[RMDB]
Conditions: 150 mM KOAc, 10 mM MgCl2 and 150 mM bicine (pH 8.5), 24 C. An RNA of 177 nucleotides, treated with DMS and 2A3 and read out base by base.
RNA sequence: GGGAACGACUCGAGUAGAGUCGAAAAGACCGUCAGUUAGACGGAAGAAGUGCAUAAAUCCACAGCGGAAGACCAGAUAAUGCACAAAUGUGGAUAAGCGUACGGAUCUACGUGCGCUAAACGUGAGACCGCAUUAUGGUUUCGACCAUAAUGCGGUAAAAGAAACAACAACAACAAC
Reactivity to DMS in 0.01 (KOAc 150mM, MgCl2 10mM, bicine 150mM(pH8.5), 24C), signal-to-noise 3, nucleotides 027 to 126: g000a110c000c000g020u000c010a180g040u040u100a090g000a010c000g010g040a060a030g000a120a080g040u010g000c070a050u020a050a110a050u000c000c000a060c180a100g000c030g000g020a010a070g010a270c050c010a130g000a080u020a060a030u010g000c000a040c000a060a050a060u020g040u000g010g030a060u000a100a020g030c010g020u020a000c010g000g030a190u050c200u060a150c000g060u010g000c000g000c000u000a000a060a010c110g000u000g000a140g000
Reactivity to 2A3 in 0.01 (KOAc 150mM, MgCl2 10mM, bicine 150mM(pH8.5), 24C), signal-to-noise 1, nucleotides 027 to 126: g100a010c010c010g030u000c000a090g060u120u300a130g000a000c080g030g050a010a000g070a060a020g020u010g020c060a080u140a150a200a040u040c040c000a000c070a100g020c020g140g050a070a020g110a080c030c030a000g040a120u070a150a040u120g040c030a030c000a000a080a070u140g000u050g000g030a020u010a040a080g030c000g000u000a000c000g020g070a040u080c020u200a060c010g000u000g000c010g000c000u020a000a000a030c090g040u060g010a060g100

Source: RMDB library OK1LIB, as collected in RNAgym. For DMS, 3,968 sequencing reads were counted. DMS adducts were read by reverse transcription with MarathonRT. As a SHAPE reagent, 2A3 marks flexible, mostly unpaired nucleotides at the ribose 2'-OH. Reactivities are given for positions 27 through 126.